The data come from the RNA Mapping Database (RMDB), library 15KREP. Chemical mapping of a 177-nucleotide RNA with DMS and 2A3. The DMS profile rests on 2,984 reads. 2A3 adducts were read by reverse transcription with SuperScript II with manganese. DMS adducts were read by reverse transcription with MarathonRT.
RNA sequence: GGGAACGACUCGAGUAGAGUCGAAAAGGGAACAAGGAAACAGGAGGAGGAUCGGUAGAAAAGAGCGAGACCUCCGAUUCGAGAGCUCCUGGACUCCUCGGCUCUGGAGUCCUCCGACCCGUGAGGUUCUUAGUAUAACGUUCGCGUUAUACUAAGAAAAAGAAACAACAACAACAAC
Reactivity to DMS in 0.01 (KOAc 150mM, MgCl2 10mM, bicine 150mM(pH8.5), 24C), signal-to-noise 3, nucleotides 027 to 126: g010g020g020a090a080c140a100a050g000g020a030a110a220c030a030g000g010a030g020g010a180g000g000a090u000c010g030g000u020a050g010a100a090a100a110g010a070g010c080g000a050g010a130c110c020u010c000c000g000a020u010u000c000g000a130g000a160g010c020u000c000c000u000g000g000a100c120u000c000c020u000c050g020g020c040u000c020u020g000g000a060g000u000c000c030u000c030c090g000a090c030c010c030g010u010g020a080g000g000u000
Reactivity to 2A3 in 0.01 (KOAc 150mM, MgCl2 10mM, bicine 150mM(pH8.5), 24C), signal-to-noise 3, nucleotides 027 to 126: g020g010g020a120a090c070a090a090g030g040a030a070a030c010a000g000g020a000g020g040a030g000g000a010u000c000g000g050u160a030g050a070a130a040a010g090a030g070c050g020a030g060a090c020c000u000c000c010g010a020u010u010c030g020a030g030a030g180c010u000c000c010u020g000g020a020c000u000c000c000u010c020g040g000c020u000c020u040g030g010a020g000u000c000c000u000c010c010g050a070c010c000c020g050u090g070a060g000g050u010